[RMDB]
RNA sequence: GGGAACGACUCGAGUAGAGUCGAAAAUGAGAAGUCGUCAGUAGUUCGACGUGAGCAGAACCCCGCCUCGAUAUGCUAUGUGGACGAGGGCAUGCCCAAGACACACCUUAACCCUAGCGGGACGCAAUGAUAGAACCUCCUUCGGGAGGUUCUAUCAAAAAGAAACAACAACAACAAC
Reactivity to DMS in 0.01 (KOAc 150mM, MgCl2 10mM, bicine 150mM(pH8.5), 24C), signal-to-noise 1, nucleotides 027 to 126: u010g010a110g050a300a200g030u000c010g060u000c040a150g000u000a110g000u000u000c030g020a020c090g000u010g000a100g000c080a120g030a070a200c120c000c020c040g010c020c000u000c110g000a100u000a010u010g010c080u020a110u010g040u000g000g000a090c070g000a300g020g010g000c080a060u010g020c000c000c010a100a090g000a020c010a060c020a050c090c010u000u010a060a110c070c000c000u000a100g020c070g000g000g000a010c110g010c080a130a110

This 177-nucleotide RNA was probed chemically with DMS. Values cover nucleotides 27 to 126. It was measured as part of the RMDB library M2PK90.